Source: RMDB library TTRINS, as collected in RNAgym. An RNA of 177 nucleotides, treated with DMS and read out base by base.

RNA sequence: GGGAACGACUCGAGUAGAGUCGAAAAGAUAUGGAUGCGGUCUAACUCACAUUAUUCGAUAAGCCACAGUCGGAAACGACUGAAUGGCUUUUGACGAAUUUUGUGAGUUAGACCGCAUCCUAAGUCACUAAACACCCUGGUUCGCCAGGGUGUUUAGAAAAGAAACAACAACAACAAC
Reactivity to DMS in 0.01 (KOAc 150mM, MgCl2 10mM, bicine 150mM(pH8.5), 24C), signal-to-noise 1, nucleotides 027 to 126: g010a030u000a300u000g000g010a000u000g000c000g000g000u000c000u010a000a010c000u010c000a010c010a030u000u000a010u010u000c020g000a120u000a050a020g010c020c000a080c000a010g010u000c000g000g000a130a100a290c010g000a010c010u000g000a090a120u020g020g010c000u000u000u000u000g000a170c130g010a040a000u000u000u000u000g020u000g010a050g000u000u000a000g010a000c000c010g000c000a000u000c000c000u000a020a070g000u000c030a210

The reactions ran in a buffer of 150 mM KOAc, 10 mM MgCl2 and 150 mM bicine (pH 8.5), at 24 C.